[RMDB]
RNA sequence: GGGAACGACUCGAGUAGAGUCGAAAAUAGCCGUUAUGCGCGAAGCGGUGUAGCGUCACUUUGAUGGCGGUACUAUGAAUUGUUGCAAGGUGUGGAGCGACCUUAAACAGUUCUGGUGGUGCUCUGAAAAACAAAUAGGCGUUCGCGCCUAUUUGAACAUUCGAAUAGCCUUCGGGCUAUUCGAAUGAAAAGAAACAACAACAACAAC
Reactivity to 2A3 in 0.01 (KOAc 150mM, MgCl2 10mM, bicine 150mM(pH8.5), 24C), signal-to-noise 4, nucleotides 027 to 156: u110a010g000c030c000g000u050u040a110u210g050c070g010c010g080a030a020g020c030g030g030u050g020u060a010g060c000g020u020c010a040c100u210u170u210g130a210u090g040g000c020g020g060u040a050c040u040a060u160g060a050a040u040u010g010u030u040g030c070a030a020g020g000u040g030u090g070g020a030g010c020g010a030c000c000u050u050a080a050a020c020a040g010u030u030c010u030g030g040u030g010g060u030g000c020u030c050u090g060a110a060a020a010a020c000a000a000a000u000a000g000g000c010g020u040u030c220g000c010g000c050c000u000a000u010u000u000g000a020a000